[RMDB]
Chemical mapping of a 177-nucleotide RNA with 2A3.
Source: RMDB library RFM100, as collected in RNAgym.
For 2A3 the reverse transcriptase was SuperScript II with manganese.

RNA sequence: GGGAACGACUCGAGUAGAGUCGAAAAAAGCAAUACUUAAAUAUAUUACUGCCCUUAGAUCAAAGCUAUAUGCAUUAGUACCUCUAUGUUCUGGAGUAAUCAAAGAUCCGCUUAGACGAGCCUAUAUGGCUACAUAAACCUUCGGGUUUAUGUAGCCAAAAGAAACAACAACAACAAC
Reactivity to 2A3 in 0.01 (KOAc 150mM, MgCl2 10mM, bicine 150mM(pH8.5), 24C), signal-to-noise 1, nucleotides 027 to 126: a000a010g250c160a220a010u160a070c020u120u120a060a010a000u220a000u070a040u150u020a000c000u100g090c000c000c000u050u110a000g010a110u160c140a070a030a040g010c000u000a020u030a060u280g080c070a000u000u140a000g000u060a010c020c000u030c000u020a010u090g030u090u060c010u070g010g020a000g030u080a000a050u020c000a050a040a040g000a000u040c020c000g000c000u000u010a020g010a020c020g000a020g040c000c000u060a020u000a050u090